[RMDB]
The data come from the RNA Mapping Database (RMDB), library M2PK50. An RNA of 177 nucleotides, treated with DMS and 2A3 and read out base by base. The 2A3 profile rests on 1,705 reads. The RNA was probed in 150 mM KOAc, 10 mM MgCl2 and 150 mM bicine (pH 8.5) at 24 C.

RNA sequence: GGGAACGACUCGAGUAGAGUCGAAAACGCGUCAGAUUCGUCUGACGCGAAAGCAUAGAACAGCGCUAUCAUGUAUUAUACUUCUAUGCAACUAUAGCGCUAAAACGAUACCGUUCGCGGUAUCGAACUGCCUCAGCUAGUUCGCUAGCUGAGGCAGAAAAGAAACAACAACAACAAC
Reactivity to DMS in 0.01 (KOAc 150mM, MgCl2 10mM, bicine 150mM(pH8.5), 24C), signal-to-noise 1, nucleotides 027 to 126: c020g010c030g000u030c000a000g000a020u000u000c150g000u020c000u000g000a000c040g020c000g010a010a070a110g010c100a100u010a080g010a040a110c170a020g000c000g050c000u000a060u020c220a160u000g060u020a180u000u000a020u000a130c240u000u020c150u000a020u000g000c000a030a140c180u040a010u010a000g000c020g010c000u000a010a030a020a080c010g000a000u030a000c000c000g020u020u010c240g010c000g000g000u000a000u000c000g000a050a060
Reactivity to 2A3 in 0.01 (KOAc 150mM, MgCl2 10mM, bicine 150mM(pH8.5), 24C), signal-to-noise 2, nucleotides 027 to 126: c000g010c000g000u020c000a010g020a030u070u090c130g030u000c140u020g000a000c010g010c010g000a000a000a000g000c000a070u070a110g080a110a020c040a080g000c000g000c020u000a000u070c080a060u060g060u010a020u100u120a080u120a190c060u160u090c020u060a010u060g010c010a010a000c000u020a000u030a020g020c040g000c020u020a000a020a000a100c000g000a000u000a010c000c000g020u040u080c220g000c030g050g000u010a000u020c010g000a010a030